Source: RMDB library 15KLIB, as collected in RNAgym.
The record gives the reactivity of an RNA of 170 nucleotides to 2A3 and DMS.
Values cover nucleotides 27 to 129.
For DMS, 1,672 sequencing reads were counted.
Conditions: 150 mM KOAc, 10 mM MgCl2 and 150 mM bicine (pH 8.5), 24 C.
The 2A3 profile rests on 1,639 reads.
RNA sequence: GGGAACGACUCGAGUAGAGUCGAAAAACGUUGAUAUGGAUUUACUCCGAGGAGACGAACUACCACGAACAGGGGUAACUCUACCCGUGGCGUCUCCGUUUGACGAGUAAGUCCGAAGUCAACAUGCAUCGCCCCCCCUUCGGGGGGGGCAAAAGAAACAACAACAACAAC
Reactivity to 2A3 in 0.01 (KOAc 150mM, MgCl2 10mM, bicine 150mM(pH8.5), 24C), signal-to-noise 2, nucleotides 027 to 129: a020c020g000u000u000g000a080u030a110u300g000g000a000u020u000u000a030c000u000c000c000g000a000g040g040a000g010a000c050g020a020a060c080u100a050c100c010a010c000g000a100a000c080a200g000g010g040g030u070a050a080c020u030c030u050a000c030c020c020g000u000g050g000c010g000u010c020u000c000c000g010u010u000u060g000a000c040g000a000g050u030a000a010g000u020c010c010g000a030a000g030u000c000a010a010c000a000u180g120c000a040u160c100
Reactivity to DMS in 0.01 (KOAc 150mM, MgCl2 10mM, bicine 150mM(pH8.5), 24C), signal-to-noise 3, nucleotides 027 to 129: a120c170g020u030u000g080a040u040a190u080g090g000a040u060u000u000a010c070u000c000c010g000a180g120g000a000g000a000c000g060a200a010c050u110a300c200c100a000c010g020a060a300c240a060g250g000g000g020u060a110a140c000u000c030u000a220c170c060c000g060u030g000g010c000g000u020c090u010c000c050g060u160u000u120g030a090c300g000a050g000u000a000a000g000u010c000c000g000a020a040g010u000c000a000a000c020a140u020g000c150a030u030c120